[RMDB]
Conditions: 150 mM KOAc, 10 mM MgCl2 and 150 mM bicine (pH 8.5), 24 C. This 177-nucleotide RNA was probed chemically with DMS and 2A3. For 2A3, 1,136 sequencing reads were counted. DMS (dimethyl sulfate) methylates the pairing face of unpaired adenines and cytosines.

RNA sequence: GGGAACGACUCGAGUAGAGUCGAAAAUAGUCGGAAUUCGUUCCGACUAGAUGAAGGCUGCAAGCGGCAGCGCGCUCAAAAGAGCACGCAAAAGCAACGCAAAAAUGAACUUAUUCGUAAGUUCAAAGCAUCUGCCUAAUUUCGAUUAGGCAGAUGCAAAAGAAACAACAACAACAAC
Reactivity to DMS in 0.01 (KOAc 150mM, MgCl2 10mM, bicine 150mM(pH8.5), 24C), signal-to-noise 1, nucleotides 027 to 126: u000a000g020u000c000g020g000a000a040u000u000c230g000u000u000c030c000g000a000c000u020a060g010a160u000g040a110a160g010g010c060u000g020c060a240a300g000c030g000g030c300a200g010c000g050c000g020c010u000c000a090a030a220a140g000a010g000c000a000c020g020c020a040a090a290a170g000c020a020a080c260g000c030a010a040a070a250a000u000g000a010a000c010u000u000a070u000u030c270g100u000a020a000g000u000u000c020a020a010a080
Reactivity to 2A3 in 0.01 (KOAc 150mM, MgCl2 10mM, bicine 150mM(pH8.5), 24C), signal-to-noise 1, nucleotides 027 to 126: u030a000g000u000c010g000g000a000a070u050u020c260g010u090u000c000c000g000a010c000u000a000g000a010u140g090a090a040g160g000c070u030g010c030a090a170g060c010g020g060c040a010g020c000g000c010g000c000u000c000a300a300a080a030g000a000g010c010a000c000g020c000a040a060a000a040g030c010a050a020c080g000c000a000a090a040a000a000u050g010a000a010c000u020u000a010u080u050c220g030u080a010a010g000u010u000c000a070a010a000